Chemical mapping of a 177-nucleotide RNA with 2A3. The reactions ran in a buffer of 150 mM KOAc, 10 mM MgCl2 and 150 mM bicine (pH 8.5), at 24 C.
[RMDB]
RNA sequence: GGGAACGACUCGAGUAGAGUCGAAAAAGCGAGGAGAAUCAAUCCCCCAGAUACACCGCAGGUGCCUUGUGGUGUUACCCCACCCAUGCAUCUACAUACGUUUGAGUGAAAGAUGGGAAACAAACGCCCCAUGGGUACGCUUCGGCGUACCCAUGGGAAAAGAAACAACAACAACAAC
Reactivity to 2A3 in 0.01 (KOAc 150mM, MgCl2 10mM, bicine 150mM(pH8.5), 24C), signal-to-noise 1, nucleotides 027 to 126: a010g070c020g000a030g150g000a140g010a000a300u080c050a070a090u020c010c000c000c060c000a000g170a110u000a040c060a000c020c000g000c010a010g040g070u160g140c000c040u080u000g010u080g070g010u000g000u000u020a070c050c050c000c000a110c000c000c000a000u010g000c040a030u000c020u100a000c000a010u130a000c080g000u000u000u200g110a100g000u060g120a120a060a000g170a050u080g010g010g000a060a080a060c030a000a130a040c130g010c010